[RMDB]
RNA sequence: GGGAACGACUCGAGUAGAGUCGAAAAAUAAACCGGAAGCGACGCAGCAAGCCCGACCGGAAGGGCAACCGGAAUGCGUAUCUCAACUCGCCCGAGACGCUCCUGAGAGACGGGAAUGCGUAAAAAACAAGAGUAUAGGAUUCGUCCUAUACUCUUGAAAAGAAACAACAACAACAAC
Reactivity to 2A3 in 0.01 (KOAc 150mM, MgCl2 10mM, bicine 150mM(pH8.5), 24C), signal-to-noise 4, nucleotides 027 to 126: a000u130a030a070a060c020c010g010g020a090a010g070c030g060a010c020g030c040a020g020c040a090a050g030c020c010c000g030a080c040c070g110g030a050a030g060g020g000c010a010a030c010c010g000g010a060a040u090g000c000g020u040a100u050c120u020c030a020a080c010u020c050g020c000c000c000g000a010g000a020c030g010c010u030c010c000u070g040a140g020a020g020a090c030g000g000g080a050a080u140g020c030g030u100a050a100a010a040a000a020
Reactivity to DMS in 0.01 (KOAc 150mM, MgCl2 10mM, bicine 150mM(pH8.5), 24C), signal-to-noise 6, nucleotides 027 to 126: a060u010a040a090a200c050c020g000g010a150a150g010c060g020a030c030g000c020a030g030c080a110a140g010c000c010c020g030a160c060c060g010g010a110a090g000g000g010c030a090a130c020c010g010g000a090a060u010g000c020g010u000a060u010c100u000c100a050a070c100u010c050g000c020c030c020g010a070g010a040c060g000c020u000c010c000u000g000a130g010a110g010a070c060g010g000g000a050a060u010g010c020g000u010a000a040a050a090a060a080